[RMDB]
RNA sequence: GGGAACGACUCGAGUAGAGUCGAAAAGAUAUGGACGGAUCCGUAGAGCGUUGAAAGAGCUCGGAAACGAGCUCUGGAGCUCGAAACGGAGUCCGUCCUAAGUCAAAUCGGCCCUUCGGGGCCGAAAGAUACAAAAUCGGUUCGCCGAUUUUGUAUCAAAAGAAACAACAACAACAAC
Reactivity to DMS in 0.01 (KOAc 150mM, MgCl2 10mM, bicine 150mM(pH8.5), 24C), signal-to-noise 2, nucleotides 027 to 126: g010a060u010a300u000g000g000a020c030g010g020a280u010c000c000g030u000a300g000a020g010c000g020u000u010g000a220a100a010g000a030g000c000u000c000g000g000a070a110a250c000g000a020g000c000u000c010u000g000g000a070g020c000u000c010g020a010a120a040c000g000g000a040g020u010c010c000g000u000c010c000u000a010a050g020u010c030a090a150a150u010c020g000g020c000c010c000u000u020c170g000g010g000g010c000c000g000a000a020a050
Chemical mapping of a 177-nucleotide RNA with DMS.
Reactivities are given for positions 27 through 126.